RNA sequence: GGGAACGACUCGAGUAGAGUCGAAAAGAUAUGGAUCCAUAAGGGAGCUCGUAGUCGGAAACGACUACCGUGAGCGAAGAACUUAAUGGAUCCUAAGUCAAAAGAUGGCUCCUUCGGGAGCCAUCAAGAACGGAUAUUACUUCGGUAAUAUCCGUUCAAAAGAAACAACAACAACAAC
Reactivity to DMS in 0.01 (KOAc 150mM, MgCl2 10mM, bicine 150mM(pH8.5), 24C), signal-to-noise 2, nucleotides 027 to 126: g000a000u000a080u010g000g000a020u000c000c000a040u000a000a020g010g020g010a050g030c010u000c060g020u010a010g010u000c000g000g020a010a030a000c000g010a010c000u000a000c070c300g000u020g000a060g010c000g000a040a200g000a130a260c000u000u000a040a050u000g010g030a000u000c000c000u020a000a060g000u000c010a140a170a170a120g000a000u000g010g020c000u000c000c000u000u030c300g030g030g000a000g020c000c000a000u000c000a030a100
Reactivity to 2A3 in 0.01 (KOAc 150mM, MgCl2 10mM, bicine 150mM(pH8.5), 24C), signal-to-noise 1, nucleotides 027 to 126: g000a030u020a020u030g000g000a010u010c010c000a010u010a030a010g060g010g030a120g000c000u000c010g000u010a000g000u000c010g000g000a010a020a000c000g000a020c010u000a000c020c000g300u260g110a010g000c020g040a060a050g000a000a000c010u040u060a120a100u190g020g000a000u000c000c000u010a000a000g010u020c000a000a000a080a300g040a010u000g000g010c010u000c000c010u010u130c300g150g000g000a030g000c000c000a000u000c000a000a000
Structure probing data (DMS and 2A3) for a 177-nucleotide construct.
For DMS, 1,438 sequencing reads were counted.
Reactivities are rounded to 0.1 and cut off at 0 and 3.
For 2A3 the reverse transcriptase was SuperScript II with manganese.
The RNA was probed in 150 mM KOAc, 10 mM MgCl2 and 150 mM bicine (pH 8.5) at 24 C.
Reactivities are given for positions 27 through 126.